[RMDB]
RNA sequence: GGGAACGACUCGAGUAGAGUCGAAAAGAUAUGGACGAGCGGAGUUACCCUGUGAACUACAGCGAAGGUGUCGGAAACGACACCCGCUGCACAGGGUAACGCCGGUGAAAUACGCUCGUCCUAAGUCCCUCUUAUCCUUGUUCGCAAGGAUAAGAGGAAAAGAAACAACAACAACAAC
Reactivity to DMS in 0.01 (KOAc 150mM, MgCl2 10mM, bicine 150mM(pH8.5), 24C), signal-to-noise 1, nucleotides 027 to 126: g010a130u010a200u020g020g020a000c000g010a000g000c000g040g020a200g000u000u000a000c000c000c000u000g000u000g000a040a000c110u020a300c020a010g020c000g040a150a180g040g010u000g000u010c030g000g000a050a140a100c010g000a060c000a010c000c020c020g030c020u000g000c020a000c050a000g000g000g000u010a000a000c000g000c090c130g030g000u000g000a160a120a160u020a200c100g000c000u000c000g010u000c000c000u010a020a060g000u000c030
Reactivity to 2A3 in 0.01 (KOAc 150mM, MgCl2 10mM, bicine 150mM(pH8.5), 24C), signal-to-noise 1, nucleotides 027 to 126: g050a020u190a030u300g000g000a000c000g000a000g080c070g060g030a160g040u020u000a000c000c000c010u000g000u030g050a130a120c140u300a120c300a020g030c040g180a300a090g080g020u000g010u040c020g000g000a090a060a080c030g020a000c000a020c000c000c000g000c000u010g040c000a020c000a020g040g000g000u000a000a000c020g000c000c000g070g020u180g100a120a150a010u300a030c110g000c000u010c020g000u040c000c000u020a000a020g010u100c000